This 177-nucleotide RNA was probed chemically with 2A3 and DMS. As a SHAPE reagent, 2A3 marks flexible, mostly unpaired nucleotides at the ribose 2'-OH. It was measured as part of the RMDB library RFMREP. Reactivities are given for positions 27 through 126.
RNA sequence: GGGAACGACUCGAGUAGAGUCGAAAAGAAGUAGUGAGACCCCUACCGAAAGGGACAGGUGCCGAAAGCACAGGAAGGAAGGGUCAAGAACAGGUCAGUGAUGCCCUCAGAUGGUCUGGGCUGCACGCUCUUAGGUUAACUUCGGUUAACCUAAGAGAAAAGAAACAACAACAACAAC
Reactivity to 2A3 in 0.01 (KOAc 150mM, MgCl2 10mM, bicine 150mM(pH8.5), 24C), signal-to-noise 3, nucleotides 027 to 126: g070a050a010g050u130a010g020u030g040a070g010a030c020c000c000c000u030a060c010c030g080a120a050a050g030g010g020a030c110a110g080g000u020g000c010c080g170a090a040a010g010c000a000c000a030g030g030a040a020g030g050a010a030g010g000g010u020c000a000a010g020a030a020c020a030g000g090u070c020a010g020u010g050a020u140g020c000c030c000u010c020a100g040a210u100g000g100u050c050u020g010g030g000c010u040g000c030a040c070g030
Reactivity to DMS in 0.01 (KOAc 150mM, MgCl2 10mM, bicine 150mM(pH8.5), 24C), signal-to-noise 4, nucleotides 027 to 126: g000a100a100g020u000a070g010u000g000a190g010a050c020c000c030c030u000a120c020c020g000a100a110a150g000g010g000a050c070a060g000g010u000g010c010c050g020a070a070a240g000c010a020c010a050g000g010a050a030g010g010a300a110g000g000g000u010c020a060a060g010a140a100c070a040g000g020u000c020a050g010u010g000a100u000g000c050c080c010u000c080a080g010a090u010g020g000u000c050u000g000g000g010c040u000g000c070a070c150g010